[RMDB]
RNA sequence: GGGAACGACUCGAGUAGAGUCGAAAAACGUUGAUAGGGAUUUACUCCGAGGAGACGAACUACCACGAACAGGGGGAACUCUACCCGUGGCGUCUCCGUUUGACGAGUAAGUCCUAAGUCAACAUGCAUCGUCUGACGUUCGCGUCAGACAAAAGAAACAACAACAACAAC
Reactivity to 2A3 in 0.01 (KOAc 150mM, MgCl2 10mM, bicine 150mM(pH8.5), 24C), signal-to-noise 4, nucleotides 027 to 129: a000c060g010u010u000g000a000u010a030g000g000g030a000u010u000u000a010c000u000c000c000g030a020g000g000a000g050a010c010g000a040a060c120u200a080c090c000a000c010g040a130a020c060a160g000g000g000g010g080a040a080c040u020c020u080a080c040c020c010g000u000g000g000c000g010u000c000u000c000c010g000u020u040u090g030a010c010g020a000g000u000a000a010g000u000c000c000u020a010a000g040u000c000a000a000c000a000u110g050c020a120u130c070
Reactivity to DMS in 0.01 (KOAc 150mM, MgCl2 10mM, bicine 150mM(pH8.5), 24C), signal-to-noise 2, nucleotides 027 to 129: a110c150g040u000u000g020a000u000a230g090g010g030a010u030u030u000a030c040u010c020c040g010a090g000g000a020g010a050c000g000a130a040c070u050a300c040c030a050c000g120a030a300c140a140g060g010g050g030g000a000a130c030u020c010u020a120c180c070c020g010u000g000g000c060g020u030c000u000c010c000g000u010u070u110g010a140c230g020a040g010u010a010a010g030u030c010c010u020a020a070g010u010c010a040a000c050a200u050g060c080a020u050c160